An RNA of 177 nucleotides, treated with DMS and 2A3 and read out base by base. It was measured as part of the RMDB library OK2TRN. The RNA was probed in 150 mM KOAc, 10 mM MgCl2 and 150 mM bicine (pH 8.5) at 24 C. DMS adducts were read by reverse transcription with MarathonRT.

RNA sequence: GGGAACGACUCGAGUAGAGUCGAAAAUAUGUCAAAACUGGGUAUGACGCUGGAAAUCGAACUGGGUUGCACCGGUGGUGAAGAAGAUGGCGUGGACAACAGCCACAUGGAUGCUUCUUCUCUGUACGACACAUAGCGUGUUCGCACGCUAUGUGUCAAAAGAAACAACAACAACAAC
Reactivity to DMS in 0.01 (KOAc 150mM, MgCl2 10mM, bicine 150mM(pH8.5), 24C), signal-to-noise 1, nucleotides 027 to 126: u000a040u010g010u000c070a070a020a100a120c110u000g000g000g000u000a110u000g000a080c040g020c060u000g020g010a080a130a060u010c130g000a060a060c070u000g000g000g000u000u000g010c090a120c050c020g020g030u000g000g000u010g010a070a020g000a050a010g000a010u000g000g000c090g000u000g030g000a100c120a070a070c140a190g000c040c000a040c100a070u000g000g020a080u020g000c000u000u000c040u000u000c000u000c040u000g000u000a120c150
Reactivity to 2A3 in 0.01 (KOAc 150mM, MgCl2 10mM, bicine 150mM(pH8.5), 24C), signal-to-noise 1, nucleotides 027 to 126: u100a030u040g030u000c000a000a040a020a080c060u070g000g000g020u060a020u080g070a060c040g020c040u020g000g150a010a070a020u180c030g030a050a060c020u090g000g000g010u010u120g070c040a060c030c020g020g010u060g040g040u070g020a030a030g010a030a030g010a070u050g000g100c120g080u040g000g030a010c040a160a030c040a200g040c000c000a010c040a040u120g160g000a070u250g080c000u040u000c000u000u000c050u000c080u090g110u080a110c120